[RMDB]
RNA sequence: GGGAACGACUCGAGUAGAGUCGAAAACCCUGGAGCCGUUAGCCUAGCAGAUUACCACCGACUGCUGUCAAUGGCCGGGGGUGCUCUCACACCCGCCCAGAAGGCCACUAUCCAGGCGCGGAUUGCGGAGCGAGGAACCAUUCGUGGUUCCUCGCUCAAAAGAAACAACAACAACAAC
Reactivity to DMS in 0.01 (KOAc 150mM, MgCl2 10mM, bicine 150mM(pH8.5), 24C), signal-to-noise 1, nucleotides 027 to 126: c030c000c000u000g010g010a110g020c030c020g020u000u000a220g020c000c020u020a060g010c020a030g030a120u020u020a150c070c100a090c200c040g020a120c040u000g000c010u000g010u000c150a070a050u000g010g050c150c000g030g010g000g000g010u000g000c150u000c110u000c100a060c010a070c000c040c000g000c170c000c050a040g010a160a070g000g040c010c050a070c120u020a110u010c060c150a070g010g030c060g030c000g000g000a100u000u010g050c130g000